[RMDB]
RNA sequence: GGGAACGACUCGAGUAGAGUCGAAAAGAUAUGGAUGUGGUGGGAGCAUUCAUCGGAAACGAUGAGUGUGCAUCGAUCACCACGCAUCCUAAGUCAAAAGCAAGGGGAAUGUUCGCAUUCCCCUUGCCCAAUGAAUGUUGUUCGCAACAUUCAUUGGAAAAGAAACAACAACAACAAC
Reactivity to 2A3 in 0.01 (KOAc 150mM, MgCl2 10mM, bicine 150mM(pH8.5), 24C), signal-to-noise 6, nucleotides 027 to 126: g010a000u020a000u040g010g000a010u020g010u020g060g030u010g010g010g020a060g000c000a000u070u000c000a000u000c000g010g000a000a020a010c010g000a000u000g010a020g080u300g080u040g020c010a060u300c050g040a030u020c000a010c020c000a010c020g010c040a030u000c000c000u010a000a000g010u020c030a060a010a120a160g000c000a000a000g000g000g000g030a000a000u000g040u130u210c300g020c170a000u010u000c000c000c000c000u000u000g000c000
Reactivity to DMS in 0.01 (KOAc 150mM, MgCl2 10mM, bicine 150mM(pH8.5), 24C), signal-to-noise 9, nucleotides 027 to 126: g000a010u000a050u010g000g000a010u000g020u000g010g020u000g000g000g000a050g020c000a020u010u000c000a000u000c000g010g000a010a010a040c010g010a010u000g000a030g010u010g060u000g000c040a300u000c250g000a110u010c000a060c000c000a010c110g020c300a110u000c000c000u000a010a130g000u000c010a100a080a110a170g000c000a010a000g000g010g000g010a020a010u000g010u000u020c300g010c000a010u000u000c000c000c000c000u000u000g000c010
Chemical mapping of a 177-nucleotide RNA with 2A3 and DMS. The RNA was probed in 150 mM KOAc, 10 mM MgCl2 and 150 mM bicine (pH 8.5) at 24 C. For DMS the reverse transcriptase was MarathonRT. It was measured as part of the RMDB library TTRDES.